[RMDB]
RNA sequence: GGGAACGACUCGAGUAGAGUCGAAAAGAAAGAAGAAAAACCGUGUGAACUAUGAUGGCUUUACAAAACUCGACGAAAAGAAACACUUGAUCCUACCGAAAGCAAGAGCUGCUGCAUACGGAAGAAAGCACGAGUCAUACUUCGGUAUGACUCGUGCAAAAGAAACAACAACAACAAC
Reactivity to 2A3 in 0.01 (KOAc 150mM, MgCl2 10mM, bicine 150mM(pH8.5), 24C), signal-to-noise 1, nucleotides 027 to 126: g140a000a060a100g000a000a000g040a000a090a000a000a000c000c000g000u000g100u000g070a000a170c030u060a150u090g100a040u000g000g040c000u100u100u210a060c240a010a000a000a190c000u010c030g100a000c150g000a000a000a000a250g000a000a010a000c140a000c030u060u040g000a030u040c000c000u060a070c030c030g030a060a130a000g040c060a150a000g000a070g230c000u000g000c000u000g020c060a010u120a100c070g170g000a000a000g200a090a030a000
An RNA of 177 nucleotides, treated with 2A3 and read out base by base. 2A3 adducts were read by reverse transcription with SuperScript II with manganese. Conditions: 150 mM KOAc, 10 mM MgCl2 and 150 mM bicine (pH 8.5), 24 C.